Overview:
Conditions: 150 mM KOAc, 10 mM MgCl2 and 150 mM bicine (pH 8.5), 24 C. The record gives the reactivity of an RNA of 207 nucleotides to 2A3. 2A3 adducts were read by reverse transcription with SuperScript II with manganese. The 2A3 profile rests on 721 reads.

RNA sequence: GGGAACGACUCGAGUAGAGUCGAAAACUUCCCAACGAGGAACGCUGACGCGAAAGCGUGGUCUAGCGAACCAAUUAGCCUGCUUGAUGCGGGCAAUUGAUGACAGAAAAGCUACCCUAGGGAUAACAGAGUCGUCACUCGCAAGAGCACAUAUCGACUCCCUUUUAGGCUUCGGCCUAAAAGGGAGAAAAGAAACAACAACAACAAC
Reactivity to 2A3 in 0.01 (KOAc 150mM, MgCl2 10mM, bicine 150mM(pH8.5), 24C), signal-to-noise 2, nucleotides 027 to 156: c020u030u030c000c010c000a000a060c010g130a060g040g060a080a000c030g020c030u080g010a050c030g020c030g060a170a060a000g090c040g010u040g000g050u030c060u070a060g020c000g040a020a010c040c000a000a000u030u010a070g020c000c000u010g010c030u220u210g130a100u300g030c000g000g000g000c020a000a000u050u000g030a070u060g020a020c060a000g250a090a080a010a000g020c030u040a040c010c010c010u070a060g000g090g020a020u050a060a040c040a030g020a000g090u010c020g010u000c060a030c060u020c010g010c030a060a000g010a020g100c020a010c030a090u170a040u070c050g040a040